Chemical mapping of a 177-nucleotide RNA with 2A3 and DMS. For 2A3, 1,467 sequencing reads were counted.

RNA sequence: GGGAACGACUCGAGUAGAGUCGAAAAAUAAACGCGAAAUCCCAAAGAAACGCGAAAGGACCGAAGCCGAUAACUACGAAAAGUAGGGUCCAAAGCGUAAAUCGGCUAAAAACGCUAAAGAUAAAAAGCUAUAUUGGAUGUUCGCAUCCAAUAUAGCAAAAGAAACAACAACAACAAC
Reactivity to 2A3 in 0.01 (KOAc 150mM, MgCl2 10mM, bicine 150mM(pH8.5), 24C), signal-to-noise 1, nucleotides 027 to 126: a000u060a010a050a020c010g020c000g040a080a030a030u030c020c000c000a050a010a000g040a000a070a000c010g010c010g060a170a070a080g040g000a000c000c050g110a020a010g020c020c000g020a040u050a120a030c000u010a020c010g020a110a210a000a110g030u010a010g000g000g000u000c010c000a090a030a000g020c000g000u000a010a080a000u010c000g000g000c000u010a080a090a040a040a040c040g020c030u100a150a090a000g040a100u250a170a180a070a000a000
Reactivity to DMS in 0.01 (KOAc 150mM, MgCl2 10mM, bicine 150mM(pH8.5), 24C), signal-to-noise 1, nucleotides 027 to 126: a090u020a030a020a050c040g000c000g000a300a120a120u000c020c000c000a140a130a150g000a090a110a050c000g000c010g030a130a190a210g000g010a000c020c000g020a070a060g000c010c050g000a020u010a070a280c000u000a000c010g010a160a100a060a050g000u000a020g020g020g000u020c000c010a040a080a110g010c020g030u010a040a070a020u010c030g000g010c000u000a010a070a020a010a070c040g020c030u000a070a090a150g030a070u010a000a070a100a020a080